[RMDB]
RNA sequence: GGGAACGACUCGAGUAGAGUCGAAAAACGCGGAGUACGCUCCGCGACAACACGUCUUUCGACCCGCUAACCGAGACCUAUGGGUCGUUAAAUUACGUCUCUAUCUUACUCACAUAACAUCGCACAAAAAACGUGGUUCGGUUCGCCGAACCACGAAGCUUACAUCCAACUUCGGUUGGAUGUAAGCAAAAGAAACAACAACAACAAC
Reactivity to 2A3 in 0.01 (KOAc 150mM, MgCl2 10mM, bicine 150mM(pH8.5), 24C), signal-to-noise 2, nucleotides 027 to 156: a010c040g000c000g000g000a010g000u040a040c190g050c100u030c000c000g000c000g000a010c000a090a000c000a010c000g090u040c080u000u220u100c030g000a010c000c010c000g080c180u160a040a000c090c010g010a050g000a030c000c040u020a060u280g000g000g000u010c010g020u060u030a060a010a000u150u030a020c030g000u000c000u000c000u010a110u100c040u060u130a080c030u090c100a060c060a140u240a140a020c010a220u170c130g080c200a140c100a040a050a000a030a060a050c010g010u000g010g010u000u000c010g000g060u070u060c150g040c010c000g000a000a000c030c000a000c000g000a000a000

Chemical mapping of a 207-nucleotide RNA with 2A3.
The data come from the RNA Mapping Database (RMDB), library M2RFPK.
The RNA was probed in 150 mM KOAc, 10 mM MgCl2 and 150 mM bicine (pH 8.5) at 24 C.
2A3 adducts were read by reverse transcription with SuperScript II with manganese.